[RMDB]
RNA sequence: GGGAACGACUCGAGUAGAGUCGAAAACUGCCAUUUUUUUCACUAAAAAACAAUGAAAAUUCGAAAAAAUCCUGGUUAUCGGUCAUUUUUCCCUGAUUUUCAGUAAUUUUUUCACUAAAAAACGGCGUAGUAUGGGUGAGUUCGCUCACCCAUACUAAAAAGAAACAACAACAACAAC
Reactivity to 2A3 in 0.01 (KOAc 150mM, MgCl2 10mM, bicine 150mM(pH8.5), 24C), signal-to-noise 2, nucleotides 027 to 126: c010u000g000c000c000a020u040u000u000u020u010u030u130c080a070c130u210a030a060a040a090a090a010c060a070a030u120g070a020a040a020a020u170u130c110g030a000a000a000a010a050a090u060c020c000u060g010g020u110u080a050u120c050g060g020u040c080a040u100u050u040u070u060c020c000c030u030g020a020u020u010u030u030c000a000g050u060a070a080u070u000u000u020u010u040c050a040c100u130a040a040a020a000a000a020c080g000g030c050g050